[RMDB]
RNA sequence: GGGAACGACUCGAGUAGAGUCGAAAAGAUAUGGACUAGGAAUGCGACAGGUGGCGUUGAAAUCGGAAACGAUGGAGCCACCUUUCGCACCUAGUCCUAAGUCAAAACUCCCCGUUCGCGGGGAGAACCGCUAAUUAUAGUUCGCUAUAAUUAGCGGAAAAGAAACAACAACAACAAC
Reactivity to DMS in 0.01 (KOAc 150mM, MgCl2 10mM, bicine 150mM(pH8.5), 24C), signal-to-noise 4, nucleotides 027 to 126: g000a050u000a300u010g010g000a010c010u000a000g010g010a100a120u000g020c010g000a010c070a010g000g010u000g000g020c010g000u010u030g000a060a130a020u000c010g010g010a120a080a210c010g010a020u000g000g000a130g020c000c000a010c000c000u000u000u000c000g010c000a030c000c000u000a000g010u000c000c000u010a000a060g010u010c020a070a070a080a150c010u000c000c000c010c000g020u010u010c210g010c010g010g000g000g000a000g000a020a080
Reactivity to 2A3 in 0.01 (KOAc 150mM, MgCl2 10mM, bicine 150mM(pH8.5), 24C), signal-to-noise 3, nucleotides 027 to 126: g030a010u070a030u150g010g000a000c000u010a000g060g050a300a300u090g000c000g000a000c000a030g000g010u000g000g000c050g200u300u110g000a030a040a000u020c020g010g060a070a060a050c030g000a010u020g000g010a010g000c000c020a000c000c010u000u000u000c000g000c000a000c000c000u000a010g000u000c000c000u000a000a010g000u000c020a010a000a030a060c000u010c000c010c000c000g000u040u060c240g010c000g040g000g020g000a000g010a010a040
Source information: The data come from the RNA Mapping Database (RMDB), library TTRDEL. Structure probing data (DMS and 2A3) for a 177-nucleotide construct. For DMS, 5,298 sequencing reads were counted. For 2A3, 6,924 sequencing reads were counted.